Source information:
The data come from the RNA Mapping Database (RMDB), library RFM100. An RNA of 177 nucleotides, treated with 2A3 and DMS and read out base by base. The DMS profile rests on 1,189 reads. The reactions ran in a buffer of 150 mM KOAc, 10 mM MgCl2 and 150 mM bicine (pH 8.5), at 24 C.

[RMDB]
RNA sequence: GGGAACGACUCGAGUAGAGUCGAAAAUAUUGGGUUCUGUUUAGGGAGAAGAUAAAGCUGGUUGAAGACAACGACACCUUUGAUACAACCGUCGCUUGUUUUUGACCAGAUCGUGUGGACAGGCCCAUUGUAGUCGUGACUUCGGUCACGACUACAAAAAAGAAACAACAACAACAAC
Reactivity to 2A3 in 0.01 (KOAc 150mM, MgCl2 10mM, bicine 150mM(pH8.5), 24C), signal-to-noise 2, nucleotides 027 to 126: u130a070u050u050g000g000g000u280u260c010u000g030u020u000u070a130g030g070g030a040g010a160a070g010a160u160a050a200a000g020c000u010g000g000u000u000g000a000a000g000a000c000a000a000c000g000a000c000a100c050c010u180u080u190g250a220u190a170c120a100a040c190c000g000u000c000g020c120u030u020g000u000u000u000u000u000g000a000c010c000a000g010a000u000c000g060u000g100u100g010g000a000c000a000g000g000c000c000c000a000
Reactivity to DMS in 0.01 (KOAc 150mM, MgCl2 10mM, bicine 150mM(pH8.5), 24C), signal-to-noise 1, nucleotides 027 to 126: u000a050u030u000g000g010g000u010u000c000u010g000u000u020u010a250g020g000g020a110g060a180a150g000a160u000a050a090a270g000c000u020g000g000u000u000g000a000a000g000a000c000a000a000c000g000a030c000a200c200c100u000u000u020g050a170u060a120c300a030a070c270c080g000u000c000g000c290u000u010g010u000u000u000u000u000g000a000c010c000a020g060a000u000c110g090u010g020u070g000g000a000c000a080g000g030c000c000c000a030